[RMDB]
RNA sequence: GGGAACGACUCGAGUAGAGUCGAAAAGACUGAGGUCUGCAGCUGUGGUUACCCACCAUUUCAAGAUAAACGAAUCCACUGUAAGGACCACCGUGAAAAAAAGAAAAGGAAAUUUGUGAAGCCAUCACUGCAGCUAUGCCAGUAGGCACAAAACCUACACUGGGGUCAUAUUCGUAUGACCCCAGUGAAAAGAAACAACAACAACAAC
Reactivity to 2A3 in 0.01 (KOAc 150mM, MgCl2 10mM, bicine 150mM(pH8.5), 24C), signal-to-noise 1, nucleotides 027 to 156: g050a000c080u040g030a030g000g080u100c030u020g010c030a020g000c080u020g000u010g040g000u090u070a070c060c030c000a000c000c000a020u000u060u050c020a060a040g030a220u140a040a110a000c030g030a040a020u000c010c030a060c080u180g100u240a160a180g060g000a000c020c010a040c010c040g020u010g040a060a080a010a000a000a000a110g050a030a060a010a000g110g020a040a070a070u080u060u150g040u000g030a050a050g010c000c010a030u090c000a020c010u010g000c020a000g000c010u050a060u010g040c000c000a070g070u070a130g030g070c130a000c010a090a080a030a060c120c000u200a020